[RMDB]
RNA sequence: GGGAACGACUCGAGUAGAGUCGAAAAGGAUAGAGUUACUGGGCUGGGCACAGUGGCUCAUGACUGUAAUCCCAGCACUUUGGGAAGCUGAGGUGGGCAGAUCAUGAGGUAAGGAGUUCAAGACCAGCUUGAUCAACAUGGUGAAACCGUGUCUCUACGUGAUCAUAUCCUUCGGGAUAUGAUCACGAAAAGAAACAACAACAACAAC
Reactivity to 2A3 in 0.01 (KOAc 150mM, MgCl2 10mM, bicine 150mM(pH8.5), 24C), signal-to-noise 2, nucleotides 027 to 156: g110g010a060u190a110g060a000g020u050u170a120c020u040g080g000g000c050u040g000g010g030c030a080c000a040g110u000g040g030c000u060c060a060u080g010a000c050u050g010u040a000a050u060c020c000c000a000g020c000a000c090u210u050u170g140g020g090a140a070g000c000u000g000a090g190g000u000g020g220g000c000a020g000a160u010c000a020u000g000a010g010g070u050a060a060g020g050a030g000u060u050c040a090a000g010a060c000c010a000g050c000u000u090g040a100u070c000a000a040c000a040u040g010g090u070g040a080a020a000c010c010g040u010g010u000c010u000c000u010a080